[RMDB]
RNA sequence: GGGAACGACUCGAGUAGAGUCGAAAAGCAAACAUCAUAGAGUAUACAUACACAAACCUAGAUGGCAUAGCCUACACUACAUUAUAUGGUAUAGCCUAUUGCUCCUAGGCUACAAACCUGUAUAGCAGUAAAGAAGAUCAUUCGUGAUCUUCUUUACAAAAGAAACAACAACAACAAC
Reactivity to 2A3 in 0.01 (KOAc 150mM, MgCl2 10mM, bicine 150mM(pH8.5), 24C), signal-to-noise 9, nucleotides 027 to 126: g040c030a030a040a070c030a070u120c030a060u120a090g090a010g100u050a020u020a070c020a020u130a040c040a020c040a100a070a010c000c010u030a030g010a090u080g030g000c010a020u030a020g010c010c010u030a020c030a020c030u160a040c050a150u190u290a140u130a040u240g020g000u030a020u020a030g000c000c010u020a040u030u180g010c000u010c020c010u010a010g010g000c000u030a030c050a020a110a020c010c000u020g020u050a040u060a050g080c080a020
Reactivity to DMS in 0.01 (KOAc 150mM, MgCl2 10mM, bicine 150mM(pH8.5), 24C), signal-to-noise 9, nucleotides 027 to 126: g010c070a100a070a100c090a060u000c070a100u010a120g000a120g010u000a040u000a050c050a030u010a060c090a070c080a050a080a080c020c010u000a050g010a100u010g010g010c030a050u000a040g000c180c010u000a050c090a050c040u010a040c140a090u000u010a070u010a090u000g000g020u000a070u000a010g000c110c000u000a020u000u000g010c030u010c210c080u000a010g010g010c020u000a020c170a040a070a070c080c040u010g020u000a020u000a050g010c120a110